[RMDB]
RNA sequence: GGGAACGACUCGAGUAGAGUCGAAAAGGAGCUCGGCAAGCUCUUAAUCGUAGGUAGAGCUUGCGUUCGCUCUACCUUACCAGCGGAGCGAACUGUAGGGUCGCUGGUAUCGUGACUCUACAGUUAGGGCACGAUACGAUAUUGCUCUAACCGAGCAUAAUAGUCACGUGUUCGCACGUGACUAUUAAAAAGAAACAACAACAACAAC
Reactivity to 2A3 in 0.01 (KOAc 150mM, MgCl2 10mM, bicine 150mM(pH8.5), 24C), signal-to-noise 3, nucleotides 027 to 156: g120g030a080g010c000u000c010g010g000c050a050a020g000c010u000c040u010u060a070a050u030c030g010u020a010g000g000u010a000g020a000g010c040u110u170g080c120g110u120u050c020g000c000u000c000u000a010c000c000u010u060a030c020c030a010g020c000g040g000a020g000c010g020a020a010c010u010g000u020a010g000g010g010u010c010g000c020u050g080g180u160a100u160c040g000u000g000a020c000u010c000u000a000c000a010g000u020u000a000g010g000g010c000a000c040g030a040u070a060c050g020a040u030a030u110u080g000c000u000c000u020a040a030c010c000g010a000g030c000a000
Reactivity to DMS in 0.01 (KOAc 150mM, MgCl2 10mM, bicine 150mM(pH8.5), 24C), signal-to-noise 2, nucleotides 027 to 156: g010g000a080g040c000u000c020g010g020c020a120a220g020c000u020c000u000u000a080a130u000c100g020u000a040g010g030u000a020g010a040g050c010u000u010g030c160g020u000u010c100g020c000u000c010u000a010c000c010u000u000a050c100c070a150g030c130g000g000a050g000c000g000a080a040c030u010g000u010a050g000g030g010u010c010g000c020u010g040g000u000a040u000c100g010u000g010a040c000u000c000u000a020c040a070g030u010u000a010g010g020g030c010a040c080g000a190u000a110c090g000a140u000a170u000u000g000c000u000c050u000a170a060c050c010g000a050g020c030a150